An RNA of 207 nucleotides, treated with 2A3 and read out base by base. For 2A3 the reverse transcriptase was SuperScript II with manganese.
RNA sequence: GGGAACGACUCGAGUAGAGUCGAAAAUGGAGUCAGAAGUUCCGUGAUUAUGUCCUGGGUCUGCUUCAUGCUUCUUUUGUGUGAUCUUAGGAAAGUUGCAGAUCUCCAAGCCUAAUUUUCCUCACUUACAAAAAGGCAGUAAUAAUACUACUUUCCAGUCCUGAAAAUGCUUCGGCAUUUUCAGGACAAAAGAAACAACAACAACAAC
Reactivity to 2A3 in 0.01 (KOAc 150mM, MgCl2 10mM, bicine 150mM(pH8.5), 24C), signal-to-noise 1, nucleotides 027 to 156: u030g010g000a000g070u140c080a000g030a150a010g180u210u000c000c000g040u030g030a080u010u250a070u280g140u020c050c060u000g000g160g000u000c040u000g000c010u050u000c010a030u060g020c000u050u000c030u000u000u050u030g080u030g080u050g060a040u030c000u010u010a020g010g000a040a020a100g020u030u050g040c050a000g030a200u000c030u000c050c030a060a000g000c000c000u140a070a100u000u020u070u050c000c000u060c080a080c070u170u250a130c080a020a030a130a000a000g020g030c070a040g100u070a060a060u060a100a030u030a070c080u070a010c030u170u120u110c000c080a070